[RMDB]
Notes
This 177-nucleotide RNA was probed chemically with 2A3 and DMS. The data come from the RNA Mapping Database (RMDB), library M2PK90. For 2A3, 3,193 sequencing reads were counted. 2A3 is a SHAPE reagent: it acylates the 2'-hydroxyl of flexible nucleotides of all four kinds.
RNA sequence: GGGAACGACUCGAGUAGAGUCGAAAAAAUUUUUUCGGUCUCGUCAGACAAAUCAGUGACAUGAUGGUCAUAGCCAAAGCACACGCACGAAAUGUCACUGAUGAAAAAGUGCGUGUGACCAAUUUAAACGUUAUAUCCAGUUCGCUGGAUAUAACGUAAAAGAAACAACAACAACAAC
Reactivity to 2A3 in 0.01 (KOAc 150mM, MgCl2 10mM, bicine 150mM(pH8.5), 24C), signal-to-noise 3, nucleotides 027 to 126: a000a000u190u100u010u010u060u050c040g030g010u030c020u000c020g070u090c130a020g000a070c020a010a130a020u030c010a010g020u010g010a000c000a030u060g040a100u080g120g020u110c110a140u130a050g050c010c030a130a090a010g060c000a010c010a000c010g000c000a020c010g070a210a070a020u020g000u000c000a010c020u000g020a010u010g020a010a030a000a030a010g010u000g000c000g020u020g010u000g020a020c000c040a060a060u160u180u140a150a170
Reactivity to DMS in 0.01 (KOAc 150mM, MgCl2 10mM, bicine 150mM(pH8.5), 24C), signal-to-noise 3, nucleotides 027 to 126: a100a040u010u010u000u010u010u000c010g030g030u010c010u010c180g010u020c150a090g020a050c100a060a120a030u000c000a040g010u000g020a020c000a050u010g010a160u000g010g010u000c070a080u000a120g010c020c080a070a090a110g010c030a080c020a010c010g000c010a020c030g010a070a060a040u000g000u000c000a000c000u000g000a010u010g000a020a030a040a100a090g020u010g000c000g020u000g010u000g010a080c090c110a050a090u000u000u010a070a080